[RMDB]
RNA sequence: GGGAACGACUCGAGUAGAGUCGAAAAGCUGCUAAUUUUGAGAAUUAUGACAAUGCUUUGUUGUCAGGGUUGGAAACUUUUCUCCUUUUCCCCUCCCAGAUCCUUGUCAUGUUGUCAUUAGCCAAGGAACCAUACCUCUGUUCGCAGAGGUAUGGUUAAAAGAAACAACAACAACAAC
Reactivity to DMS in 0.01 (KOAc 150mM, MgCl2 10mM, bicine 150mM(pH8.5), 24C), signal-to-noise 2, nucleotides 027 to 126: g030c080u000g000c030u000a020a040u000u010u010u000g010a290g000a050a040u000u000a050u000g000a060c030a020a060u020g000c210u010u010u000g010u000u000g010u000c040a040g010g000g010u010u000g000g000a080a060a080c090u000u000u000u000c110u000c060c020u000u000u020u000c030c010c000c060u000c030c010c020a110g000a080u000c020c030u010u000g000u000c080a050u000g000u000u000g000u000c050a090u000u000a130g020c060c090a070a090g000g010
Reactivity to 2A3 in 0.01 (KOAc 150mM, MgCl2 10mM, bicine 150mM(pH8.5), 24C), signal-to-noise 1, nucleotides 027 to 126: g050c060u070g020c010u070a000a060u100u160u260u210g100a070g010a050a020u060u250a010u200g000a010c000a030a010u060g070c070u120u100u210g050u060u090g040u110c060a000g050g020g000u090u060g070g070a090a120a220c050u190u010u130u120c060u020c000c000u110u000u160u170c050c020c030c040u000c020c000c020a080g040a070u020c000c000u070u040g000u000c000a070u100g000u070u040g080u020c030a080u010u020a000g040c020c000a000a000g030g000
Chemical mapping of a 177-nucleotide RNA with DMS and 2A3. High DMS reactivity at an A or C suggests that its Watson-Crick edge is free. The 2A3 profile rests on 507 reads. It was measured as part of the RMDB library OK2TST. For DMS, 2,519 sequencing reads were counted.